[RMDB]
RNA sequence: GGGAACGACUCGAGUAGAGUCGAAAAGAUAUGGAUGUGAGAAGCUCCCUGCAACGUUGAAAUCGGAAACGAUGGAGUUGCCUGGAGCCUCACAUCCUAAGUCAAAACUUCCACUUCGGUGGAAGAAGAUCAGCAAAGUGUUCGCACUUUGCUGAUCAAAAGAAACAACAACAACAAC
Reactivity to 2A3 in 0.01 (KOAc 150mM, MgCl2 10mM, bicine 150mM(pH8.5), 24C), signal-to-noise 1, nucleotides 027 to 126: g020a000u060a030u160g000g010a000u000g010u000g030a000g020a260a060g020c010u010c000c000c000u000g000c000a040a020c010g190u300u080g000a000a040a010u000c010g000g010a040a080a050c020g000a000u020g000g030a040g030u000u000g000c000c020u000g000g000a010g000c000c000u010c000a000c000a000u010c000c010u000a010a000g000u000c010a000a000a120a140c010u000u010c000c000a000c000u090u090c300g190g000u010g000g000a020a000g000a000a010
Reactivity to DMS in 0.01 (KOAc 150mM, MgCl2 10mM, bicine 150mM(pH8.5), 24C), signal-to-noise 2, nucleotides 027 to 126: g030a040u000a300u000g000g000a000u000g000u000g000a000g010a180a100g030c000u000c000c000c040u010g020c010a020a030c010g000u000u020g010a090a140a020u000c000g010g000a090a080a230c020g010a000u000g000g000a050g010u000u000g010c000c050u000g030g000a000g040c010c000u000c000a000c000a000u000c000c000u000a000a070g000u000c040a070a050a090a170c010u000u000c000c000a010c010u000u000c160g040g010u000g010g000a000a000g000a070a080